[RMDB]
RNA sequence: GGGAACGACUCGAGUAGAGUCGAAAAGAUAUGGAACGGUACCAUGCAAGGACCUGGCUCGGAAACGAGCCAGUCUGAUGACCACAUUUACCGUUCCUAAGUCAAAACAUGGACUUCGGUCCAUGAACUUAUUAGCUGGGUUCGCCCAGCUAAUAAGAAAAGAAACAACAACAACAAC
Reactivity to 2A3 in 0.01 (KOAc 150mM, MgCl2 10mM, bicine 150mM(pH8.5), 24C), signal-to-noise 3, nucleotides 027 to 126: g000a000u010a000u050g000g010a000a000c000g000g030u030a050c090c130a060u050g000c180a300a300g020g000a020c040c190u010g000g000c000u000c000g000g000a010a010a010c010g000a010g010c000c000a000g010u000c010u020g140a130u240g140a090c100c030a060c080a070u010u010u010a010c000c010g000u000u000c000c000u000a010a000g010u010c020a020a000a080a120c010a000u000g000g000a000c010u050u060c300g120g000u000c000c000a000u000g000a020a020
Reactivity to DMS in 0.01 (KOAc 150mM, MgCl2 10mM, bicine 150mM(pH8.5), 24C), signal-to-noise 5, nucleotides 027 to 126: g000a020u000a060u020g000g000a010a010c000g000g000u000a010c300c180a020u000g000c190a060a140g000g010a030c100c180u000g000g000c010u000c000g010g000a020a020a020c010g010a020g000c000c000a000g010u000c000u000g000a060u010g010a160c280c150a110c010a020u000u000u000a020c010c010g020u000u000c000c000u000a000a040g010u010c010a070a060a090a200c010a000u000g010g000a020c000u000u020c210g020g000u010c000c000a000u000g000a080a160